[RMDB]
Chemical mapping of a 177-nucleotide RNA with 2A3 and DMS. For DMS, 3,875 sequencing reads were counted. For 2A3 the reverse transcriptase was SuperScript II with manganese. Values cover nucleotides 27 to 126. The RNA was probed in 150 mM KOAc, 10 mM MgCl2 and 150 mM bicine (pH 8.5) at 24 C. For 2A3, 5,245 sequencing reads were counted.
RNA sequence: GGGAACGACUCGAGUAGAGUCGAAAAAAAAAGAUAUGGAGCGAAAUGUCGAUGAAAUGGGACUACCCACCUAACUCGGAAACGAGUUAGAGGUCCCAUGGAGACAGUUUCGCUCCUAAGUCAAAAAGAUGAUAUUAGAGUUCGCUCUAAUAUCAUCAAAAGAAACAACAACAACAAC
Reactivity to 2A3 in 0.01 (KOAc 150mM, MgCl2 10mM, bicine 150mM(pH8.5), 24C), signal-to-noise 1, nucleotides 027 to 126: a000a000a000a030a030g020a010u030a020u040g000g000a000g020c000g020a000a010a000u010g000u000c020g190a300u010g000a000a020a010u000g000g000g030a030c130u300a040c220c030c000a050c000c010u000a000a000c000u010c000g000g000a000a010a000c000g000a000g000u000u000a000g010a020g010g020u020c010c000c000a000u000g010g000a000g000a000c000a010g000u000u020u010c010g000c000u010c000c000u000a000a000g000u000c000a000a020a000a000a270
Reactivity to DMS in 0.01 (KOAc 150mM, MgCl2 10mM, bicine 150mM(pH8.5), 24C), signal-to-noise 2, nucleotides 027 to 126: a060a070a080a110a080g000a020u000a020u020g000g000a020g020c010g010a010a010a030u000g000u000c010g000a130u010g000a140a110a000u010g010g000g010a080c010u000a070c020c010c020a300c170c010u000a020a020c000u000c000g010g000a010a020a020c000g000a020g000u000u000a000g000a080g000g000u000c010c000c000a000u000g000g000a010g010a010c000a010g010u010u000u000c000g010c000u000c000c000u000a000a050g000u010c010a080a070a080a090a130